[RMDB]
RNA sequence: GGGAACGACUCGAGUAGAGUCGAAAAAGGACCCCUUCAGCGAACAGAAGAGCCUAACACGGAAUAGGAGUAAGACCAUAGCGAUGGGAAGAGAUGCUAGGAGUCGGUGGAGACCGAAGCGAGGAGGCCCGUGUAUAUAGUUCGCUAUAUACACGGGAAAAGAAACAACAACAACAAC
Reactivity to 2A3 in 0.01 (KOAc 150mM, MgCl2 10mM, bicine 150mM(pH8.5), 24C), signal-to-noise 2, nucleotides 027 to 126: a010g110g050a060c030c000c000c010u020u020c000a050g050c030g030a030a020c020a040g090a120a000g030a030g000c030c000u070a090a020c070a010c140g040g040a130a070u070a110g060g000a060g040u080a050a010g020a040c000c020a050u070a030g030c050g050a020u110g010g000g020a010a030g010a020g000a010u050g020c030u050a060g050g070a060g090u050c040g010g080u060g040g030a070g000a010c040c030g010a050a010g020c020g020a040g010g000a020g020g060
Reactivity to DMS in 0.01 (KOAc 150mM, MgCl2 10mM, bicine 150mM(pH8.5), 24C), signal-to-noise 3, nucleotides 027 to 126: a100g000g010a200c050c020c010c060u000u010c020a060g010c010g010a070a040c050a080g000a040a040g020a120g010c030c040u000a060a090c080a120c090g000g000a060a090u000a060g000g010a060g010u000a080a080g000a090c060c030a080u010a080g000c080g010a090u000g000g000g000a080a040g010a100g000a090u000g020c070u010a070g000g000a060g010u010c060g010g010u000g010g010a110g000a040c050c010g010a040a080g000c050g030a040g000g000a090g000g000